RNA sequence: GGGAACGACUCGAGUAGAGUCGAAAAGCACAGUAGCUCAGGCCUGUAAUCCCAGCACUUUAGGAGGCCGAGGCAGGCGGAUCACCUGAGGUAGGCGGAUCACCUGAGGUUGGGAGUUCAAGACCAGAAAUCCAGUGCCAUUCGUGGCACUGGAUUUAAAAGAAACAACAACAACAAC
Reactivity to 2A3 in 0.01 (KOAc 150mM, MgCl2 10mM, bicine 150mM(pH8.5), 24C), signal-to-noise 2, nucleotides 027 to 126: g070c060a020c030a130g030u100a000g040c000u000c140a100g030g010c000c010u040g100u070a060a050u030c030c000c020a000g040c070a120c020u080u070u050a060g080g040a050g070g090c000c000g010a070g070g020c020a000g000g010c140g050g150a270u120c090a030c050c000u000g010a000g070g060u070a020g050g000c050g000g130a130u080c030a060c030c000u020g060a010g000g020u000u000g010g000g020a030g000u030u080c130a100a000g050a060c050c040a020g050
Reactivity to DMS in 0.01 (KOAc 150mM, MgCl2 10mM, bicine 150mM(pH8.5), 24C), signal-to-noise 2, nucleotides 027 to 126: g010c060a050c070a060g050u000a070g000c060u000c150a100g020g020c170c020u000g000u010a150a190u010c000c030c020a130g000c030a100c060u000u030u000a000g000g010a180g000g000c000c000g000a150g010g010c010a000g050g000c060g030g000a160u000c070a280c000c000u000g010a050g030g000u040a090g000g000c040g020g000a110u000c040a200c000c000u030g000a000g010g000u000u000g000g000g000a120g000u000u020c050a040a050g000a150c060c080a220g010